This 177-nucleotide RNA was probed chemically with DMS.
The RNA was probed in 150 mM KOAc, 10 mM MgCl2 and 150 mM bicine (pH 8.5) at 24 C.
For DMS, 1,039 sequencing reads were counted.
[RMDB]
RNA sequence: GGGAACGACUCGAGUAGAGUCGAAAAGCCGGGGACAUCUCGGAAUGAGAAAGGAGACAGGUGGAAGAAAAAGGGGUGGGCCCCCCGAUCCGAGGGGCCCGACGCCCGGAUCUGGAGAGCACUCCCGCUGAUUAGUAAUGUUCGCAUUACUAAUCAGAAAAGAAACAACAACAACAAC
Reactivity to DMS in 0.01 (KOAc 150mM, MgCl2 10mM, bicine 150mM(pH8.5), 24C), signal-to-noise 2, nucleotides 027 to 126: g010c000c010g030g000g010g030a140c110a070u000c020u010c040g050g010a100a060u000g010a090g000a080a100a110g000g000a050g020a100c070a030g010g010u010g010g010a140a060g000a060a020a040a270a120g000g000g000g030u000g010g000g000c020c000c000c000c010c060g000a080u010c140c040g000a030g010g000g020g040c010c050c000g020a030c060g020c000c010c000g020g000a160u000c060u010g030g000a090g000a080g010c080a060c120u000c000c020c060g000